[RMDB]
RNA sequence: GGGAACGACUCGAGUAGAGUCGAAAACGCGAUGGAUACGUCCAUCGCGAAUCCGUCCAAGCCGCGGACGUUAAACUGUGGCACGGUUGUGCCUAGGUGCAACCCUGCUUUUAAUGGCGGCACCCCUGCCCAAGCUACCGUCUACGGACGGUAGCAAAUAUUAGGCCGAUUUCGAUCGGCCUAAUAUAAAAGAAACAACAACAACAAC
Reactivity to 2A3 in 0.01 (KOAc 150mM, MgCl2 10mM, bicine 150mM(pH8.5), 24C), signal-to-noise 1, nucleotides 027 to 156: c010g000c010g010a000u000g000g010a010u000a080c210g070u040c010c000a000u000c000g000c000g010a000a000u000c010c000g010u000c010c020a090a040g000c000c000g000c010g010g010a000c020g020u000u010a010a010a070c110u100g040u120g110g000c000a000c000g040g000u030u010g000u000g010c010c010u100a290g130g000u000g010c000a000a000c000c000c010u000g000c000u150u010u040u190a170a150u120g070g000c000g000g010c000a140c010c000c000c040u080g010c030c020c020a030a040g010c000u000a000c000c000g000u000c000u000a060c210g130g000a000c000g020g000u000a000g000c000a010a000